[RMDB]
RNA sequence: GGGAACGACUCGAGUAGAGUCGAAAACACAACUGCGAAGGGGGGACGGAGAUGGCUAUGUUGGCCGGGCGACGGUUGUCCCGGUUUAAGCGUGUAGGCUGGUUUUCCAGGCAAAUCCGGAAUUGAAUCCCAAACAGUUAUUCGUAACUGUUUGGGAAAAAGAAACAACAACAACAAC
Reactivity to DMS in 0.01 (KOAc 150mM, MgCl2 10mM, bicine 150mM(pH8.5), 24C), signal-to-noise 3, nucleotides 027 to 126: c050a090c120a060a070c070u010g010c090g010a090a080g000g000g010g000g010g010a050c060g010g010a100g010a080u010g020g000c030u010a040u000g010u000u000g020g010c020c010g010g000g000c300g010a070c090g030g010u000u010g000u010c000c000c000g010g000u000u000u000a040a050g030c070g010u000g000u000a060g020g000c020u000g000g000u000u010u000u000c010c010a120g010g000c050a030a080a130u000c040c020g000g000a070a100u010u010g010a110a150